[RMDB]
RNA sequence: GGGAACGACUCGAGUAGAGUCGAAAAGUGCCAGAGAAGUUGUAUAUUGGGCUACCACCCAGUGAUGCAAUGGAGGCUUAUUAGGGUUGUCAGUUUUCCACAGGGUAGCAAUUAAAACUGUCUGAAAAAAACGAAACCACCUUCGGGUGGUUUCGAACGAAUAGGAGUACUUCGGUACUCCUAUUCGAAAAGAAACAACAACAACAAC
Reactivity to 2A3 in 0.01 (KOAc 150mM, MgCl2 10mM, bicine 150mM(pH8.5), 24C), signal-to-noise 1, nucleotides 027 to 156: g030u010g000c010c000a040g000a010g000a300a010g000u010u000g000u040a060u020a010u110u070g010g050g000c070u100a080c060c040a000c030c000c000a010g010u050g100a050u030g000c030a010a010u010g000g000a000g010g000c020u040u100a200u110u140a130g170g000g020u000u010g000u000c000a010g000u000u020u240u120c000c020a090c060a090g070g130g070u100a060g110c090a090a120u100u090a100a040a010a000c000u010g010u010c010u000g010a090a010a010a010a010a000a010c010g000a000a000a000c000c000a000c010c000u030u020c130g160g000g000u020g020g000u000u000u000c000g010a000a010
Reactivity to DMS in 0.01 (KOAc 150mM, MgCl2 10mM, bicine 150mM(pH8.5), 24C), signal-to-noise 1, nucleotides 027 to 156: g020u020g000c040c000a190g050a220g000a160a180g000u000u000g030u000a120u030a100u010u000g020g040g060c020u040a220c230c240a100c010c000c000a040g020u000g020a120u000g020c020a060a030u000g030g020a170g010g030c020u010u020a020u010u010a120g020g000g000u000u010g010u020c000a050g010u000u000u000u000c010c020a120c070a300g000g030g060u000a100g020c020a020a220u020u000a040a020a050a010c020u000g020u020c000u040g020a020a000a120a050a080a070a270c010g000a010a010a000c000c000a010c000c020u000u000c300g060g000g060u000g000g000u000u000u000c000g040a070a090